[RMDB]
RNA sequence: GGGAACGACUCGAGUAGAGUCGAAAAGCUCUCUCUCAUACAUCAAUACAGUAGUACUAGUAUUGAGAGAGAAUUAAAUAUGAUCUUGAUUUUUGAACCAAAGGUAGUUAAGCCUUAUAUACUAGGAUGGUAUCAUAGCAUUCGUGCUAUGAUACCAAAAAGAAACAACAACAACAAC
Reactivity to 2A3 in 0.01 (KOAc 150mM, MgCl2 10mM, bicine 150mM(pH8.5), 24C), signal-to-noise 3, nucleotides 027 to 126: g050c010u000c000u000c000u000c000u000c000a030u020a110c020a040u090c060a180a000u050a110c030a050g290u300a010g040u100a060c030u010a030g030u000a030u080u250g000a000g000a000g000a000g010a000a000u010u020a010a010a010u230a110u110g050a040u020c020u050u070g060a160u060u080u080u080u170g080a030a020c070c000a040a010a020g000g030u060a070g110u190u180a150a000g000c000c020u050u040a110u040a000u000a110c080u050a000g170g080a110
Reactivity to DMS in 0.01 (KOAc 150mM, MgCl2 10mM, bicine 150mM(pH8.5), 24C), signal-to-noise 4, nucleotides 027 to 126: g020c170u000c000u000c000u000c000u000c000a020u010a000c030a100u000c190a180a120u000a020c010a170g010u000a110g030u000a100c060u000a150g020u000a010u000u020g010a000g000a020g000a000g000a000a040u030u030a040a090a050u020a100u020g010a080u030c050u000u000g040a070u010u010u000u000u010g040a120a100c100c050a010a010a060g020g020u000a030g030u010u000a120a100g010c000c010u000u000a060u030a060u010a080c120u000a060g000g020a190
Chemical mapping of a 177-nucleotide RNA with 2A3 and DMS. 2A3 adducts were read by reverse transcription with SuperScript II with manganese. For DMS the reverse transcriptase was MarathonRT. The reactions ran in a buffer of 150 mM KOAc, 10 mM MgCl2 and 150 mM bicine (pH 8.5), at 24 C.